[RMDB]
RNA sequence: GGGAACGACUCGAGUAGAGUCGAAAAAUAUUAAUGCUAUAUAGCCGAUAUCGAUAUGCGCGCCGUAGCAUGCUACGAUGCUAUACGGCGCAUAUUAAUGCAUUAUAAUCGAUGCCGUAGCGCUAUAUCGUAAUUGACGGUUCGCCGUCAAUUACGAAAAAGAAACAACAACAACAAC
Reactivity to 2A3 in 0.01 (KOAc 150mM, MgCl2 10mM, bicine 150mM(pH8.5), 24C), signal-to-noise 2, nucleotides 027 to 126: a000u180a070u130u130a170a050u140g030c020u020a000u020a020u030a190g050c040c030g070a070u040a000u100c020g000a000u010a010u140g050c050g000c010g000c030c060g000u010a010g000c010a010u000g000c000u000a090c080g050a010u030g000c000u040a030u000a100c060g020g050c010g000c000a000u000a010u010u100a130a020u130g000c000a000u070u060a070u120a140a100u060c060g010a010u000g000c020c020g050u030a030g000c000g010c040u000a000u010a030
Reactivity to DMS in 0.01 (KOAc 150mM, MgCl2 10mM, bicine 150mM(pH8.5), 24C), signal-to-noise 2, nucleotides 027 to 126: a080u010a080u000u020a060a060u000g010c030u020a060u000a020u000a030g020c010c080g000a120u000a070u000c030g020a020u000a070u000g020c040g030c010g020c030c010g010u000a010g010c020a020u000g000c050u000a040c110g000a070u000g000c000u010a080u020a080c020g000g000c000g030c000a000u000a020u010u000a140a080u010g000c020a040u010u010a140u000a080a080u000c050g000a020u000g020c030c040g020u000a060g000c100g000c020u000a010u000a050